[RMDB]
Conditions: 150 mM KOAc, 10 mM MgCl2 and 150 mM bicine (pH 8.5), 24 C. This 177-nucleotide RNA was probed chemically with DMS and 2A3. The 2A3 profile rests on 487 reads. Values cover nucleotides 27 to 126.
RNA sequence: GGGAACGACUCGAGUAGAGUCGAAAAGAAUGGAAAGGGAUUGUAGAGAUCAGUGUCGCAGCAUUCUCAAUUAGAUUGUAUAUGGUUAAGGCCGGGCUUCUCGUGCGACAGAUACUGGUGCGAAGAAGGGUUAAAAAUACUUCGGUAUUUUUAACCCAAAAGAAACAACAACAACAAC
Reactivity to DMS in 0.01 (KOAc 150mM, MgCl2 10mM, bicine 150mM(pH8.5), 24C), signal-to-noise 3, nucleotides 027 to 126: g000a060a040u010g000g000a050a080a050g020g010g000a070u030u000g000u030a040g030a140g000a040u000c020a060g010u010g020u000c030g010c020a080g000c040a080u000u000c020u000c120a100a100u030u050a080g030a100u000u000g030u020a050u010a060u010g020g000u000u000a100a120g000g010c050c030g000g000g000c040u000u010c020u010c000g010u010g000c000g000a050c020a060g000a110u030a020c040u000g010g000u010g000c050g010a060a110g040a110a140
Reactivity to 2A3 in 0.01 (KOAc 150mM, MgCl2 10mM, bicine 150mM(pH8.5), 24C), signal-to-noise 1, nucleotides 027 to 126: g070a010a000u070g000g050a000a080a080g080g010g000a030u070u090g000u080a020g020a000g000a070u150c010a110g000u000g030u000c030g000c050a000g000c050a000u100u000c030u000c000a060a210u130u110a040g000a000u000u110g110u150a140u010a010u110g000g020u030u110a110a060g050g000c050c000g020g000g000c000u000u000c000u000c010g020u040g010c000g040a030c030a000g000a000u020a010c060u090g030g060u050g070c020g070a110a030g010a120a010